[RMDB]
RNA sequence: GGGAACGACUCGAGUAGAGUCGAAAAGAUAUGGAUCACUGCAACAGCUAUAAGUGGUCGGAAACGACCACAUAGACAUGCAGUGAUCCUAAGUCAAAAUCAUACCAUAGUUCGCUAUGGUAUGAAACCUCACGUUAGAGUUCGCUCUAACGUGAGGAAAAGAAACAACAACAACAAC
Reactivity to DMS in 0.01 (KOAc 150mM, MgCl2 10mM, bicine 150mM(pH8.5), 24C), signal-to-noise 2, nucleotides 027 to 126: g000a000u010a260u000g020g020a000u000c000a010c000u010g000c010a020a070c280a170g010c020u000a010u010a070a110g000u000g000g030u000c000g030g000a060a030a110c000g000a000c000c000a000c000a010u000a000g030a040c120a200u000g000c010a000g000u000g000a000u010c010c000u000a000a100g000u010c060a090a070a120a200u000c000a000u000a000c000c000a000u000a000g010u010u020c210g010c000u000a020u000g000g000u030a000u000g000a000a070a080
Reactivity to 2A3 in 0.01 (KOAc 150mM, MgCl2 10mM, bicine 150mM(pH8.5), 24C), signal-to-noise 2, nucleotides 027 to 126: g010a010u050a030u100g010g010a000u000c000a000c020u030g060c000a070a060c060a270g120c060u030a030u040a300a150g000u000g020g020u000c020g010g000a020a050a000c010g000a000c000c000a000c000a000u000a000g050a040c030a020u040g000c000a010g000u000g010a010u010c000c000u000a000a000g020u000c030a000a010a020a290u030c000a010u000a000c020c000a000u000a000g030u030u040c210g000c210u010a010u000g010g000u010a000u020g000a010a000a010